Overview
The record gives the reactivity of an RNA of 177 nucleotides to 2A3 and DMS. For 2A3, 1,259 sequencing reads were counted. Reactivities are rounded to 0.1 and cut off at 0 and 3. For 2A3 the reverse transcriptase was SuperScript II with manganese. The data come from the RNA Mapping Database (RMDB), library VIROID.
[RMDB]
RNA sequence: GGGAACGACUCGAGUAGAGUCGAAAAUCCACCUUGGGGUGCCCUAUUCGGGACACUGCAGUUCCGAUAGAAAGGCUAAGAACGUCGCAAUGACGUAAGGUGGGACUUUUCCUUCUGGAACCAAGCGGUUGCCUAAAUGGUUCGCCAUUUAGGCAACAAAAGAAACAACAACAACAAC
Reactivity to 2A3 in 0.01 (KOAc 150mM, MgCl2 10mM, bicine 150mM(pH8.5), 24C), signal-to-noise 1, nucleotides 027 to 126: u020c000c000a000c000c000u010u020g110g070g000g040u080g000c000c000c000u000a020u000u060c000g000g000g030a000c020a050c100u300g040c020a030g000u010u000c010c000g000a000u000a020g030a030a080a000g020g000c010u030a050a040g040a080a040c000g010u000c000g000c180a300a290u300g000a010c010g020u030a000a000g000g000u000g010g010g000a000c000u130u050u010u000c030c000u050u170c090u100g100g010a060a040c040c010a110a020g100c110g090
Reactivity to DMS in 0.01 (KOAc 150mM, MgCl2 10mM, bicine 150mM(pH8.5), 24C), signal-to-noise 2, nucleotides 027 to 126: u000c000c000a050c000c020u000u000g000g010g000g030u010g010c000c000c000u000a130u000u000c030g040g010g000a010c000a070c260u010g000c270a120g000u000u000c000c000g010a020u000a050g000a010a120a190g010g000c020u000a080a120g050a100a040c000g010u000c010g020c110a150a100u000g000a010c010g010u000a020a010g000g000u000g000g000g000a030c120u000u000u000u000c020c030u000u020c100u010g030g000a050a090c070c060a080a220g000c210g000